[RMDB]
RNA sequence: GGGAACGACUCGAGUAGAGUCGAAAAUACACACCACAUCGAUCAAUACGUUAUUCUUCGUACAUCGUAAGGGAGAUGUUUCAGAAUAUUUUAAAAUAAACGAAGAUCAAUCUGCCAGGAUACUGAAGCUGUUGUGAGAAUUCGUUCUCACAACAGCAAAAGAAACAACAACAACAAC
Reactivity to 2A3 in 0.01 (KOAc 150mM, MgCl2 10mM, bicine 150mM(pH8.5), 24C), signal-to-noise 6, nucleotides 027 to 126: u150a010c050a000c000a020c030c000a050c020a050u020c020g030a020u020c010a020a060u050a080c020g020u050u060a130u090u080c030u010u040c010g040u010a050c010a040u010c020g020u040a080a130g050g030g000a090g010a020u010g050u010u060u100c080a030g070a090a060u090a140u050u220u140u260a170a190a070a070u200a060a070a010c030g000a040a010g000a030u010c010a030a060u020c020u080g110c050c060a020g030g030a050u090a220c040u070g060a100a020
Reactivity to DMS in 0.01 (KOAc 150mM, MgCl2 10mM, bicine 150mM(pH8.5), 24C), signal-to-noise 2, nucleotides 027 to 126: u050a020c110a130c100a180c020c000a010c110a050u010c030g000a300u030c030a040a130u000a000c030g000u000u000a060u020u000c050u000u000c030g020u030a000c150a170u050c000g020u000a020a040g000g000g000a300g000a000u000g000u000u100u000c100a150g000a090a160u080a020u000u030u030u050a000a090a030a120u000a050a020a060c020g010a130a060g080a070u030c110a040a040u050c130u050g000c000c010a030g000g000a070u040a020c090u000g000a000a180